Chemical mapping of a 207-nucleotide RNA with 2A3. It was measured as part of the RMDB library M2RFPK. The 2A3 profile rests on 438 reads. The RNA was probed in 150 mM KOAc, 10 mM MgCl2 and 150 mM bicine (pH 8.5) at 24 C. Values cover nucleotides 27 to 156. For 2A3 the reverse transcriptase was SuperScript II with manganese.

RNA sequence: GGGAACGACUCGAGUAGAGUCGAAAAUGGUAGUCCGCCACUCUAAGGGGACGCCUUUAGAAGAAGAGGCUAGGUGGUAUUCCGGUGUGGGAUACUUGGUAAUAUGUAACGCUAAUUGCAUUAGAUUAAAACUUUGCAUACUUCGGUAUGCAAAGAACGUAGUCAACACCUUCGGGUGUUGACUACGAAAAGAAACAACAACAACAAC
Reactivity to 2A3 in 0.01 (KOAc 150mM, MgCl2 10mM, bicine 150mM(pH8.5), 24C), signal-to-noise 1, nucleotides 027 to 156: u250g020g070u060a070g010u010c010c010g130c030c020a040c010u090c080u070a080a120g000g000g000g040a020c010g130c000c000u090u050u060a140g000a160a010g030a000a110g010a010g050g020c050u040a010g120g000u010g000g010u040a010u050u000c070c000g210g000u130g060u130g200g040g000a010u020a110c000u000u090g000g000u030a020a070u030a080u240g120u090a150a000c010g060c060u090a140a000u100u090g020c010a030u050u050a020g030a110u090u190a020a000a040a030c000u000u000u010g010c000a000u000a000c000u000u000c080g100g030u000a000u000g000c000a000a000a000g010a000a000